Record summary: This 177-nucleotide RNA was probed chemically with DMS and 2A3. For DMS, 129,336 sequencing reads were counted. Values are in units of 0.01, from 0 to 300, in steps of 10. The reactions ran in a buffer of 150 mM KOAc, 10 mM MgCl2 and 150 mM bicine (pH 8.5), at 24 C. For 2A3 the reverse transcriptase was SuperScript II with manganese.
RNA sequence: GGGAACGACUCGAGUAGAGUCGAAAAGAUCGAGGUCUGCCCACUUCCUCAUAUAUCCUUACCACGGCAGACUUCGAAAGGCAUGAGAAUGAGGAAGUGGUGGCCAGGAUAUGUCUCAUGCCUCACACUACACGUUACUAUUCGUAGUAGCGUGUAGAAAAGAAACAACAACAACAAC
Reactivity to DMS in 0.01 (KOAc 150mM, MgCl2 10mM, bicine 150mM(pH8.5), 24C), signal-to-noise 9, nucleotides 027 to 126: g010a130u000c010g000a030g000g000u000c010u000g010c020c010c070a040c020u000u000c000c000u000c010a120u010a040u000a020u000c010c070u000u010a120c130c110a120c180g010g010c010a010g000a020c010u000u000c010g000a010a060a020g000g000c010a010u000g000a020g000a050a030u000g000a020g000g000a030a010g020u000g010g030u010g020g010c100c090a080g010g000a020u000a030u000g000u000c000u000c000a010u000g000c000c000u000c070a060c220a210
Reactivity to 2A3 in 0.01 (KOAc 150mM, MgCl2 10mM, bicine 150mM(pH8.5), 24C), signal-to-noise 9, nucleotides 027 to 126: g070a020u040c010g000a000g010g000u000c000u010g010c010c000c010a010c010u010u000c000c000u010c080a000u050a000u000a000u110c010c010u030u140a070c030c030a110c080g020g000c000a010g000a010c000u000u000c000g010a050a020a000g000g000c000a000u010g000a000g010a030a050u110g000a010g010g010a010a010g000u020g020g100u140g070g040c060c030a010g000g010a010u010a010u060g070u000c000u000c000a000u010g000c010c000u010c000a040c000a010